[RMDB]
RNA sequence: GGGAACGACUCGAGUAGAGUCGAAAAGAUAUGGACUGCCUACCAGCAACAGCUCGGAAACGAGACAUGCUGUGUAGUGCAGUCCUAAGUCAAAACAGGGAUAUCGCCUUCGGGCGAUAUCCCUGAAGUUUCAUCUUCUGUUCGCAGAAGAUGAAACAAAAGAAACAACAACAACAAC
Reactivity to DMS in 0.01 (KOAc 150mM, MgCl2 10mM, bicine 150mM(pH8.5), 24C), signal-to-noise 2, nucleotides 027 to 126: g000a030u000a300u000g010g000a030c000u010g030c010c000u010a010c000c000a070g000c000a040a040c230a260g000c010u000c000g050g000a080a050a300c000g000a020g010a030c090a160u000g010c010u010g000u020g020u010a010g030u020g020c000a000g000u000c000c000u000a030a080g000u000c000a070a090a110a160c010a000g000g010g030a020u010a000u000c000g000c000c000u000u000c190g020g020g010c000g030a000u000a000u000c000c000c000u000g020a020a060

Conditions: 150 mM KOAc, 10 mM MgCl2 and 150 mM bicine (pH 8.5), 24 C. Structure probing data (DMS) for a 177-nucleotide construct. It was measured as part of the RMDB library TTRDEL. Values are in units of 0.01, from 0 to 300, in steps of 10. The DMS profile rests on 1,186 reads.